The record gives the reactivity of an RNA of 177 nucleotides to DMS and 2A3.
RNA sequence: GGGAACGACUCGAGUAGAGUCGAAAACAACUUCCCUUCGGGGAAGUUGAACCAUUCCCAAAUUCCACCUUGCUGAUGGCACCCGGAGAGGAGCCAUCACCACUCCGAGAGCCUUCGGGCUCUCGAAUCAUUGGAUAUGCUUCGGCAUAUCCAAUGAAAAAGAAACAACAACAACAAC
Reactivity to DMS in 0.01 (KOAc 150mM, MgCl2 10mM, bicine 150mM(pH8.5), 24C), signal-to-noise 2, nucleotides 027 to 126: c010a000a020c000u000u000c000c000c000u000u020c190g030g000g060g010a000a010g000u000u000g020a050a090c240c180a260u000u000c000c000c000a060a120a160u010u010c050c120a100c150c160u000u000g010c150u010g010a010u000g000g010c020a050c020c000c010g010g020a260g000a110g020g010a070g010c010c000a030u000c000a020c080c060a080c300u000c090c040g000a030g000a020g010c000c000u010u000c240g020g010g000c000u000c010u000c000g000a030a040
Reactivity to 2A3 in 0.01 (KOAc 150mM, MgCl2 10mM, bicine 150mM(pH8.5), 24C), signal-to-noise 2, nucleotides 027 to 126: c010a000a000c000u000u000c000c000c000u000u020c220g010g010g000g000a000a000g000u000u000g020a000a010c030c000a050u020u010c020c000c000a030a040a040u140u020c040c010a070c080c070u090u140g030c020u020g040a000u000g000g000c000a040c040c050c020g270g130a190g040a240g240g000a000g000c000c000a010u010c000a000c000c010a030c000u040c060c000g000a000g000a000g000c020c000u060u080c250g060g010g000c010u000c010u000c000g010a000a020
For 2A3, 2,376 sequencing reads were counted. For 2A3 the reverse transcriptase was SuperScript II with manganese.